[RMDB]
Conditions: 150 mM KOAc, 10 mM MgCl2 and 150 mM bicine (pH 8.5), 24 C. An RNA of 170 nucleotides, treated with DMS and 2A3 and read out base by base. It was measured as part of the RMDB library 15KLIB. For DMS, 3,550 sequencing reads were counted. Values are in units of 0.01, from 0 to 300, in steps of 10.

RNA sequence: GGGAACGACUCGAGUAGAGUCGAAAAGACUCCGGGACUCCUUGCAUGUUGGGGACGAAGCCGCCCCCGGGCGCUCCCCUCGAUCCACCUUCGAGGGGGUUCACACCUCCAACCUGCGGGCCGGCUAAUACCGCGUUCUUCGGAACGCGGAAAAGAAACAACAACAACAAC
Reactivity to DMS in 0.01 (KOAc 150mM, MgCl2 10mM, bicine 150mM(pH8.5), 24C), signal-to-noise 3, nucleotides 027 to 129: g040a150c110u050c040c020g000g010g040a090c010u020c100c000u010u060g090c020a110u000g150u000u000g010g000g000g000a140c150g080a110a020g060c140c000g060c100c050c030c060c220g040g060g060c040g030c090u090c000c070c020c010u010c060g000a000u060c090c140a060c180c110u000u030c040g030a040g000g080g000g000g000u030u060c140a030c160a190c130c000u120c000c060a050a000c000c120u020g060c030g000g040g000c090c000g000g060c210u030a110a060u150a140
Reactivity to 2A3 in 0.01 (KOAc 150mM, MgCl2 10mM, bicine 150mM(pH8.5), 24C), signal-to-noise 2, nucleotides 027 to 129: g090a050c030u000c100c000g010g000g180a070c020u160c100c000u010u290g020c050a000u030g020u000u000g040g000g010g000a000c050g030a050a010g060c170c050g020c000c000c010c030c050g010g000g030c000g020c000u040c000c000c000c000u000c000g000a000u000c030c100a090c020c070u000u000c000g000a000g000g000g020g000g000u090u100c010a040c040a030c040c000u040c000c000a040a000c000c000u010g020c000g000g000g000c000c010g000g000c000u130a090a010u070a130